An RNA of 207 nucleotides, treated with 2A3 and DMS and read out base by base. For 2A3, 7,338 sequencing reads were counted. It was measured as part of the RMDB library OK3TST. For DMS the reverse transcriptase was MarathonRT. The DMS profile rests on 8,500 reads. Values cover nucleotides 27 to 156.
[RMDB]
RNA sequence: GGGAACGACUCGAGUAGAGUCGAAAAUAAGAAGGGACGCAUGACCCACGACUACGCGCGAUUUGCCCGCCUUGACCCCAAGCGGUGCGGUCCGAAGGGCAAACUGUUCACCGCGAAAGAGGAAGAGGAAGAGGAGGGGUUCGUUUACGCGAGCUAACCAUUAGAUUGAGUUCGCUCAAUCUAAUGGAAAAGAAACAACAACAACAAC
Reactivity to 2A3 in 0.01 (KOAc 150mM, MgCl2 10mM, bicine 150mM(pH8.5), 24C), signal-to-noise 7, nucleotides 027 to 156: u220a030a020g090a030a110g030g010g000a040c050g030c120a080u120g060a120c020c020c020a030c060g090a040c050u180a080c030g010c000g000c010g050a030u030u040u170g040c000c000c000g020c020c020u020u030g020a050c000c000c000c020a070a000g010c010g030g030u040g010c030g000g000u010c040c040g110a100a100g030g010g000c020a070a060a000c010u020g010u150u140c030a020c020c010g010c030g050a070a100a020g100a040g040g030a040a030g020a040g050g010a030a030g020a040g060g030a030g000g010g010g000u030u050c020g010u020u090u110a040c040g000c000g010a000g000c030u030a050a030
Reactivity to DMS in 0.01 (KOAc 150mM, MgCl2 10mM, bicine 150mM(pH8.5), 24C), signal-to-noise 4, nucleotides 027 to 156: u010a110a100g020a160a120g010g010g020a120c060g010c100a090u010g030a240c020c010c020a150c060g010a130c010u000a060c020g000c020g010c050g010a110u000u010u000g020c020c000c020g030c020c020u010u000g020a300c000c000c000c010a100a230g030c030g020g040u000g020c060g020g020u000c020c050g020a080a100g010g020g000c130a060a070a040c010u000g000u000u000c010a060c120c020g010c010g000a060a070a140g000a120g010g000a090a150g020a110g010g020a090a220g000a070g020g020a040g020g010g030g030u000u000c080g010u000u000u000a060c100g020c010g010a050g010c040u010a120a290